[RMDB]
RNA sequence: GGGAACGACUCGAGUAGAGUCGAAAAAAUGAUUUUAUCUGAAUGGCUAUUCAAAUUUAAGCGCAUUAAAACCAAUUUCAUACUGAAAUUUGACGAUAAUAAAGCAUUAAAAUUUUAUUAACUAGUCCUUACGCUAAGCAUUCGUGCUUAGCGUAAGAAAAGAAACAACAACAACAAC
Reactivity to DMS in 0.01 (KOAc 150mM, MgCl2 10mM, bicine 150mM(pH8.5), 24C), signal-to-noise 1, nucleotides 027 to 126: a040a010u080g010a060u000u030u070u080a010u000c000u000g000a030a000u000g020g000c140u000a020u000u000c140a010a010a080u000u000u000a120a070g000c050g000c300a000u000u000a010a050a120a300c020c000a080a050u000u000u000c010a050u060a200c220u030g040a010a030a050u040u000u010g020a050c040g000a100u010a030a000u000a000a050a010g000c100a060u040u020a100a000a010a070u010u000u000u000a050u000u080a050a170c140u060a050g000u000c040
Reactivity to 2A3 in 0.01 (KOAc 150mM, MgCl2 10mM, bicine 150mM(pH8.5), 24C), signal-to-noise 2, nucleotides 027 to 126: a000a000u060g030a040u020u040u070u120a070u030c020u080g050a040a020u050g030g000c030u080a070u100u160c120a090a090a080u080u150u170a070a020g010c060g000c100a030u040u080a090a100a060a090c030c010a010a000u010u020u020c040a060u120a300c080u140g040a000a000a030u060u020u010g040a030c030g030a000u030a080a010u030a030a120a050g020c010a000u020u100a030a090a140a140u110u170u060u070a160u090u020a090a070c110u040a030g030u040c000